[RMDB]
RNA sequence: GGGAACGACUCGAGUAGAGUCGAAAAAGUAUCGGGUUCGCCCGAUACUGUUGGCGCGCGGCCUUUGUCCUGUCGCGCGUAUAUUGCGCGCGUUAUACGCGCAUGUGGGGUCGUUCGCGACCCCAAACAUAGGAUGGGAUUUCGAUCCCAUCCUAUGAAAAGAAACAACAACAACAAC
Reactivity to 2A3 in 0.01 (KOAc 150mM, MgCl2 10mM, bicine 150mM(pH8.5), 24C), signal-to-noise 2, nucleotides 027 to 126: a000g000u000a010u010c010g000g020g050u030u060c200g070c030c000c010g000a000u000a000c000u000g010u030u180g110g000c000g000c000g010c000g010g020c020c020u100u120u150g050u050c000c000u000g010u010c000g000c000g000c000g000u000a040u020a010u040u090g030c000g010c010g000c000g040u150u120a200u050a160c000g000c000g010c040a010u080g060u090g070g000g030g000u010c000g000u020u030c120g010c000g090a010c020c020c000c000a020a010a010
Reactivity to DMS in 0.01 (KOAc 150mM, MgCl2 10mM, bicine 150mM(pH8.5), 24C), signal-to-noise 4, nucleotides 027 to 126: a010g010u000a000u000c000g010g010g010u000u010c250g010c000c000c000g010a000u000a000c000u000g010u000u000g010g010c020g010c010g010c000g010g010c010c180u000u010u010g000u010c110c090u000g010u000c010g010c000g020c000g010u000a010u000a050u010u000g000c010g010c000g020c050g010u000u010a070u010a090c010g000c010g030c010a010u000g010u000g010g010g000g030u000c000g010u000u010c170g020c010g010a010c000c000c000c000a000a010a080